[RMDB]
RNA sequence: GGGAACGACUCGAGUAGAGUCGAAAAUUCUAGAAUAGAUACUUUCUUGUUGUAUAAGGGUGUGGCGCAUAGAGCCACGGAUUCUGAGCAGUUUUAUGCUGCAAUGGAGGAUGCAUGGCACUACAAGCUAAAUAUAUCGUUUCGACGAUAUAUUUAGAAAAGAAACAACAACAACAAC
Reactivity to DMS in 0.01 (KOAc 150mM, MgCl2 10mM, bicine 150mM(pH8.5), 24C), signal-to-noise 6, nucleotides 027 to 126: u010u010c020u000a090g010a150a090u030a100g010a070u020a060c090u010u000u000c030u010u010g000u000u000g010u000a080u030a110a100g010g010g020u010g020u000g000g010c030g030c150a200u020a030g000a100g000c010c010a030c060g000g000a090u020u010c020u000g000a300g000c010a020g010u010u030u040u040a100u060g000c010u000g000c020a030a050u030g010g000a040g000g010a040u010g030c020a070u010g000g000c030a090c030u010a050c170a050a110g010
Reactivity to 2A3 in 0.01 (KOAc 150mM, MgCl2 10mM, bicine 150mM(pH8.5), 24C), signal-to-noise 5, nucleotides 027 to 126: u050u010c020u050a050g080a140a080u130a080g140a070u170a240c060u110u200u080c050u070u060g010u040u030g050u040a110u060a180a120g070g100g000u060g000u010g050g000c040g020c100a090u090a210g050a030g030c010c000a020c010g010g040a000u040u000c020u030g050a020g000c000a000g020u020u090u110u100a160u300g060c000u000g000c000a020a090u130g040g020a000g030g020a020u060g080c060a030u080g050g050c020a010c050u120a030c040a070a010g060